[RMDB]
RNA sequence: GGGAACGACUCGAGUAGAGUCGAAAACUUGCCUGAGCGCGCCGCAGCGCUUAAAAAUGCUCGCGGAACUGAUGCAGUGGGAGGCGACCGAUUGAAGCCAAUUGCAGACAUCAUGUGUGACUGAGUAGCGUGUAACUAUAUUCGUAUAGUUACACGCAAAAGAAACAACAACAACAAC
Reactivity to 2A3 in 0.01 (KOAc 150mM, MgCl2 10mM, bicine 150mM(pH8.5), 24C), signal-to-noise 8, nucleotides 027 to 126: c010u030u100g050c000c030u030g030a010g020c010g000c010g030c020c020g020c010a010g000c000g000c000u010u010a010a010a010a000a010u070g000c010u050c130g000c010g020g010a030a020c040u050g020a040u070g010c020a020g020u060g020g030g020a040g020g000c020g030a050c010c030g130a130u050u200g090a080a000g020c010c000a050a050u080u070g000c020a020g060a140c010a030u080c050a070u100g030u000g030u020g060a050c040u020g020a030g140u080a020
Reactivity to DMS in 0.01 (KOAc 150mM, MgCl2 10mM, bicine 150mM(pH8.5), 24C), signal-to-noise 5, nucleotides 027 to 126: c090u000u000g010c020c000u010g000a070g000c030g000c100g040c050c040g010c040a110g020c030g010c030u000u010a000a040a100a150a150u010g000c010u000c120g030c020g000g020a160a110c090u010g020a070u020g010c050a090g000u010g000g000g000a210g010g010c040g010a120c060c140g000a070u030u020g010a100a150g000c030c040a060a150u030u020g000c020a040g000a180c090a040u000c050a080u030g010u020g030u000g000a180c030u000g000a060g000u000a110